RNA sequence: GGGAACGACUCGAGUAGAGUCGAAAAAGCAGGAGUACGCUCCUGCAUGGGUAGACGAAUUGACCCCAACUGAAGUUCAAUUCUAACGUUAAAAGGAGUUUUAUAUGACUGGACGUACGCGUCCAGGUGACGAUUUCAUUCUUCGGAAUGAAAUCAACUGCAUGAAUACGUUCGCGUAUUCAUGCAGAAAAGAAACAACAACAACAAC
Reactivity to 2A3 in 0.01 (KOAc 150mM, MgCl2 10mM, bicine 150mM(pH8.5), 24C), signal-to-noise 1, nucleotides 027 to 156: a000g020c010a010g000g010a000g020u050a020c190g020c060u000c000c000u000g030c000a020u020g030g000g000u120a100g020a050c000g030a010a000u010u000g010a010c000c020c000c000a100a100c180u300g030a050a000g040u070u010c000a000a000u000u000c040u140a110a040c030g100u080u210a030a040a040a040g240g050a130g000u040u070u130u000a160u000a120u090g180a110c010u000g000g000a000c010g000u080a010c190g000c010g130u000c010c000a000g000g020u010g010a040c090g000a000u000u000u020c000a000u010u000c000u000u040c150g090g020a000a000u000g000a000a000a000u010c000a000a020

About this RNA:
Chemical mapping of a 207-nucleotide RNA with 2A3. The RNA was probed in 150 mM KOAc, 10 mM MgCl2 and 150 mM bicine (pH 8.5) at 24 C. Reactivities are rounded to 0.1 and cut off at 0 and 3. The data come from the RNA Mapping Database (RMDB), library M2RFPK.